This 177-nucleotide RNA was probed chemically with DMS and 2A3. It was measured as part of the RMDB libraries RFM100 and RFMREP. The RNA was probed in 150 mM KOAc, 10 mM MgCl2 and 150 mM bicine (pH 8.5) at 24 C. DMS adducts were read by reverse transcription with MarathonRT. Reactivities are given for positions 27 through 126.

RNA sequence: GGGAACGACUCGAGUAGAGUCGAAAACGCAUCAUUGGAUCGAGUGCCAAGAAAAGCCCCAGCGUAUGCUAAGCGACCCGUACCGCAAACCGACACAGGUGGGUGGGUAGAAUAUACCAAGGCGUAAAAUUAAGUGUAGGUUCGCCUACACUUAAUUAAAAGAAACAACAACAACAAC
Reactivity to DMS in 0.01 (KOAc 150mM, MgCl2 10mM, bicine 150mM(pH8.5), 24C), signal-to-noise 9, nucleotides 027 to 126: c080g010c060a080u020c070a120u010u010g010g010a070u020c060g010a140g020u020g010c020c030a060a070g000a080a080a100a130g010c030c020c010c040a100g000c060g020u000a040u020g010c030u010a080a150g000c040g000a080c030c020c030g020u020a080c030c020g010c060a040a060a060c040c020g010a120c140a070c140a090g010g010u000g000g000g020u010g010g000g010u000a020g000a090a070u020a080u010a070c050c030a070a090g000g010c040g010u010a050a060
Reactivity to 2A3 in 0.01 (KOAc 150mM, MgCl2 10mM, bicine 150mM(pH8.5), 24C), signal-to-noise 9, nucleotides 027 to 126: c020g020c010a070u040c020a050u060u120g070g010a040u090c030g030a030g080u130g050c010c010a050a030g090a060a100a010a020g030c010c000c000c010a010g020c010g050u090a050u140g030c040u080a070a050g030c010g040a030c000c000c020g040u070a080c010c020g040c080a060a060a010c020c010g100a060c060a020c020a140g040g030u050g030g030g040u080g010g000g000u030a030g030a090a050u180a010u020a080c010c020a040a020g050g000c050g040u070a080a130